[RMDB]
RNA sequence: GGGAACGACUCGAGUAGAGUCGAAAAAACAGCUGCUUCGGCAGCUGUUAACGCUCGCGGCUCGAGGCUGCACGAGCCGGACAGCAGCCUGUCCGCGAGCUAUAGCCUUGGAGUUCGCUCCAAGGAAUCUAAACUUCAGAUUCGUCUGAAGUUUAGAAAAAGAAACAACAACAACAAC
Reactivity to 2A3 in 0.01 (KOAc 150mM, MgCl2 10mM, bicine 150mM(pH8.5), 24C), signal-to-noise 2, nucleotides 027 to 126: a010a000c010a000g010c000u010g000c000u070u100c200g110g010c010a000g020c010u000g000u000u000a000a000c020g000c000u000c000g000c010g010g020c050u010c060g190a010g010g020c000u000g010c050a060c190g110a100g150c080c030g050g060a060c050a030g000c000a000g010c000c000u000g020u020c000c000g000c000g000a000g000c000u020a010u020a010g010c000c000u000u000g010g000a000g010u090u080c140g080c110u000c000c000a000a000g000g000a000a000
Reactivity to DMS in 0.01 (KOAc 150mM, MgCl2 10mM, bicine 150mM(pH8.5), 24C), signal-to-noise 5, nucleotides 027 to 126: a040a000c000a000g020c000u000g010c000u000u020c210g020g010c000a000g020c000u000g010u000u000a030a060c190g000c000u000c010g020c010g000g000c190u010c040g010a010g010g010c000u010g010c020a100c130g000a130g010c090c080g010g010a100c120a120g000c010a010g010c020c000u000g000u000c000c000g000c010g000a020g010c000u000a010u010a080g010c000c000u000u000g000g000a020g010u000u010c210g010c000u000c000c000a000a010g000g000a030a020
The record gives the reactivity of an RNA of 177 nucleotides to 2A3 and DMS. For DMS, 8,849 sequencing reads were counted. It was measured as part of the RMDB library M2PK50. Values cover nucleotides 27 to 126. 2A3 adducts were read by reverse transcription with SuperScript II with manganese. Reactivities are rounded to 0.1 and cut off at 0 and 3.